[RMDB]
RNA sequence: GGGAACGACUCGAGUAGAGUCGAAAAGCACCGCGUGUUUGGUGAGGGGACGAAACCUCAUGCUUCCGCCCCGGUGACAAGCGUAGGUGACGAUACUCUGAGGCUGGUGAGGACAGCACCUGCAUAGGCCGCUUGGUUCGUUCGCGAGCUAAGCGGCAAAAGAAACAACAACAACAAC
Reactivity to 2A3 in 0.01 (KOAc 150mM, MgCl2 10mM, bicine 150mM(pH8.5), 24C), signal-to-noise 9, nucleotides 027 to 126: g030c010a010c030c010g000c030g020u070g050u040u100u080g080g010u070g050a050g020g020g000g040a070c070g080a070a040a040c020c020u080c050a030u130g070c030u050u000c020c030g030c010c010c010c010g030g040u080g030a060c040a050a020g010c010g050u070a130g000g030u020g010a030c010g000a010u050a120c020u020c030u080g050a040g100g000c040u040g010g060u040g020a040g010g040a020c010a030g020c010a030c000c010u040g000c030a070u080a130g140
Reactivity to DMS in 0.01 (KOAc 150mM, MgCl2 10mM, bicine 150mM(pH8.5), 24C), signal-to-noise 9, nucleotides 027 to 126: g020c050a040c020c010g010c160g030u010g000u020u010u010g000g020u000g010a150g010g000g000g010a130c100g010a080a060a070c040c050u010c090a060u010g010c090u010u010c060c070g000c020c030c040c020g000g010u030g010a070c090a060a080g000c040g020u010a070g020g010u010g010a100c040g010a120u020a080c030u000c020u020g000a110g010g000c010u000g000g000u010g000a070g000g000a120c190a110g000c040a060c010c000u010g010c040a140u020a130g000

Conditions: 150 mM KOAc, 10 mM MgCl2 and 150 mM bicine (pH 8.5), 24 C.
Structure probing data (2A3 and DMS) for a 177-nucleotide construct.
For 2A3, 23,568 sequencing reads were counted.
2A3 adducts were read by reverse transcription with SuperScript II with manganese.
The data come from the RNA Mapping Database (RMDB), library OK1LIB.
For DMS the reverse transcriptase was MarathonRT.